[RMDB]
RNA sequence: GGGAACGACUCGAGUAGAGUCGAAAAUCCUCAUUUCGUUAGGAGCAGGAAGACAUCCAUAACAUGCUACAUUAAUAAAGGAGUUCUCAGGGCUACCAACCUUACAGUAGAGGUUGAGUAGUAGUAUAUCGCAUAUAUAAUUCGUUAUAUAUGCGAUAAAAGAAACAACAACAACAAC
Reactivity to DMS in 0.01 (KOAc 150mM, MgCl2 10mM, bicine 150mM(pH8.5), 24C), signal-to-noise 9, nucleotides 027 to 126: u000c020c000u010c170a120u010u010u010c100g020u010u010a060g010g010a050g010c030a100g000g010a060a090g010a110c110a080u010c030c030a070u010a060a100c130a100u010g010c030u000a060c070a080u010u010a060a070u010a060a100a060g000g000a100g010u000u000c020u000c020a140g010g010g000c000u000a000c000c000a000a010c000c000u000u010a080c150a160g010u030a130g010a010g000g000u000u000g000a100g010u000a000g010u000a040g020u000a090u010
Reactivity to 2A3 in 0.01 (KOAc 150mM, MgCl2 10mM, bicine 150mM(pH8.5), 24C), signal-to-noise 9, nucleotides 027 to 126: u010c000c000u070c050a120u050u150u120c080g050u030u060a040g010g030a030g030c030a020g060g060a060a030g070a080c030a100u020c030c010a040u050a080a050c040a080u130g040c010u090a070c020a140u150u160a170a100u140a140a110a020g050g010a050g020u050u000c020u010c040a050g060g100g000c000u000a000c000c000a000a000c000c000u070u080a100c090a170g170u220a060g070a010g040g000u000u010g040a050g030u000a000g000u010a010g040u020a050u010
The data come from the RNA Mapping Database (RMDB), libraries RFM100 and RFMREP. Chemical mapping of a 177-nucleotide RNA with DMS and 2A3. The reactions ran in a buffer of 150 mM KOAc, 10 mM MgCl2 and 150 mM bicine (pH 8.5), at 24 C.